The record gives the reactivity of an RNA of 177 nucleotides to 2A3 and DMS. For 2A3 the reverse transcriptase was SuperScript II with manganese. Source: RMDB library M2PK90, as collected in RNAgym. The reactions ran in a buffer of 150 mM KOAc, 10 mM MgCl2 and 150 mM bicine (pH 8.5), at 24 C.
RNA sequence: GGGAACGACUCGAGUAGAGUCGAAAAAGCGUCGACGAACGUUCCAACCUUCCAAAGCAGCAAAAGCUGAACCUUCCAACCUUCCAAUCUACUCGAGAGGAGGAGGAGGAGGAGGAGGAGGAAUUAAUCGCACUAUAUAAUUCGUUAUAUAGUGCGAAAAAGAAACAACAACAACAAC
Reactivity to 2A3 in 0.01 (KOAc 150mM, MgCl2 10mM, bicine 150mM(pH8.5), 24C), signal-to-noise 6, nucleotides 027 to 126: a010g080c040g060u020c020g070a160c040g020a210a080c010g000u000u010c020c000a080a090c040c020u090u010c020c020a070a120a080g030c010a020g000c010a040a190a170a160g000c020u010g020a090a080c000c010u040u010c010c020a090a080c020c020u070u000c010c000a020a050u000c010u050a060c020u030c070g020a030g010a020g050g040a030g020g030a050g020g040a050g000g010a050g020g050a040g010g060a040g020g050a040g030g050a050a050u120u100a120a060
Reactivity to DMS in 0.01 (KOAc 150mM, MgCl2 10mM, bicine 150mM(pH8.5), 24C), signal-to-noise 5, nucleotides 027 to 126: a110g010c100g000u000c030g020a080c090g010a090a120c030g000u000u000c010c010a100a140c060c010u000u000c020c030a100a130a090g010c020a030g010c070a080a060a070a120g020c010u000g000a080a200c040c010u000u010c000c020a120a090c050c010u000u000c010c030a080a180u000c010u000a040c050u000c030g000a020g000a210g000g000a130g000g000a120g000g000a170g000g080a130g000g010a120g000g000a130g000g010a140g000g010a300a070u010u010a040a140